[RMDB]
RNA sequence: GGGAACGACUCGAGUAGAGUCGAAAAGAUGUAUGACAGCAUGAAGGACAAGCAGAUUUCGAUCCCGGAAGUGAUCGAGAAAUGGGGCGUGCCGCCGGAAAAGAUGAUCGACCUGCAAUCGCUGACAUCCAUCCGUUUUAUUCGUAAAACGGAUGGAAAAAGAAACAACAACAACAAC
Reactivity to DMS in 0.01 (KOAc 150mM, MgCl2 10mM, bicine 150mM(pH8.5), 24C), signal-to-noise 4, nucleotides 027 to 126: g030a090u010g020u010a070u000g030a140c030a060g000c020a070u000g000a130a090g020g000a080c100a090a110g000c050a020g010a280u010u000u000c020g000a010u000c010c040c030g030g030a090a080g020u010g000a010u000c020g000a040g020a020a050a130u010g010g020g010g010c050g020u000g000c080c070g010c030c020g010g000a090a030a090a100g000a110u000g000a040u000c030g000a070c170c020u010g000c070a070a080u000c090g020c040u000g000a050c140a120
Reactivity to 2A3 in 0.01 (KOAc 150mM, MgCl2 10mM, bicine 150mM(pH8.5), 24C), signal-to-noise 2, nucleotides 027 to 126: g040a010u080g020u090a030u080g030a010c040a020g000c020a010u090g060a120a050g080g030a020c030a070a050g000c030a010g020a090u090u090u000c020g000a020u000c000c000c000g020g010a080a040g030u070g060a060u060c010g010a020g050a050a080a040u180g020g000g000g010c020g000u030g010c010c010g000c020c000g000g010a090a100a000a000g080a030u150g000a020u040c010g020a020c000c020u000g020c020a030a020u070c030g000c060u040g040a030c010a060